Background
An RNA of 177 nucleotides, treated with DMS and 2A3 and read out base by base.
RNA sequence: GGGAACGACUCGAGUAGAGUCGAAAAUCGUGACAUUCAGCUUCGGCAGAGCAAUAUUCCAAUAGCUCGGUAUUGAUAAGCGAUCCGGCAUAAAUGACCACCUGCGCCUGUUGCAGCAAGCGGUAGCGACCCUGGAUGAUUUCGAUCAUCCAGGGUCAAAAGAAACAACAACAACAAC
Reactivity to DMS in 0.01 (KOAc 150mM, MgCl2 10mM, bicine 150mM(pH8.5), 24C), signal-to-noise 2, nucleotides 027 to 126: u010c050g040u020g010a090c140a100u010u010c070a130g020c050u000u000c110g010g000c040a130g020a090g010c010a140a070u000a100u000u000c070c080a080a130u000a080g000c010u000c030g010g050u010a050u020u010g000a080u000a060a100g010c050g010a040u000c030c020g000g010c020a090u000a010a040a040u000g020a090c040c020a040c010c010u000g010c050g060c080c040u010g000u000u000g030c060a060g010c120a090a090g010c070g020g000u020a060g020c180
Reactivity to 2A3 in 0.01 (KOAc 150mM, MgCl2 10mM, bicine 150mM(pH8.5), 24C), signal-to-noise 1, nucleotides 027 to 126: u030c000g030u030g010a000c040a030u050u070c030a100g010c020u060u030c050g040g060c020a060g010a010g040c020a060a130u060a080u160u050c040c000a070a080u050a040g030c060u050c080g000g050u090a080u050u080g020a040u020a180a010g060c000g030a020u040c010c000g000g090c020a060u080a140a200a070u140g040a020c020c030a060c040c010u020g000c010g020c000c000u120g030u100u120g030c040a020g020c010a100a000g030c030g080g070u070a040g080c020
DMS adducts were read by reverse transcription with MarathonRT. The 2A3 profile rests on 906 reads.